[RMDB]
RNA sequence: GGGAACGACUCGAGUAGAGUCGAAAACAUGUUACUUAAAAAGGAGCCACUUCUCUAUGUGCCCAUCCGGCUGGCUGGACACACUAGACACCUCCCAGGUCCUCGUGUGUACCUGGUUGAGAGGCUCGAAACUAAUCUACUUCGGUAGAUUAGUUUCAAAAGAAACAACAACAACAAC
Reactivity to DMS in 0.01 (KOAc 150mM, MgCl2 10mM, bicine 150mM(pH8.5), 24C), signal-to-noise 5, nucleotides 027 to 126: c080a090u010g020u010u000a110c130u010u000a030a050a090a130a130g010g010a020g000c010c010a120c200u010u000c080u000c010u000a040u000g010u000g000c010c000c010a010u000c020c010g020g030c270u000g010g020c100u000g010g010a010c010a010c010a010c260u000a010g000a020c110a110c190c000u010c010c000c000a020g000g000u000c040c020u000c300g020u010g000u000g030u000a010c000c000u000g000g000u000u010g000a020g000a080g000g010c010u000c010
Reactivity to 2A3 in 0.01 (KOAc 150mM, MgCl2 10mM, bicine 150mM(pH8.5), 24C), signal-to-noise 4, nucleotides 027 to 126: c040a020u120g040u120u140a140c060u120u140a090a070a030a040a090g150g010a010g000c020c000a030c040u200u040c020u020c000u010a010u020g010u000g000c000c000c000a010u010c000c030g300g080c300u240g040g000c010u010g020g010a000c000a000c000a010c060u010a010g000a010c020a030c060c010u020c000c010c010a010g010g010u020c020c010u060c080g130u110g020u020g000u140a010c000c000u000g000g000u070u130g010a050g000a040g010g000c000u010c020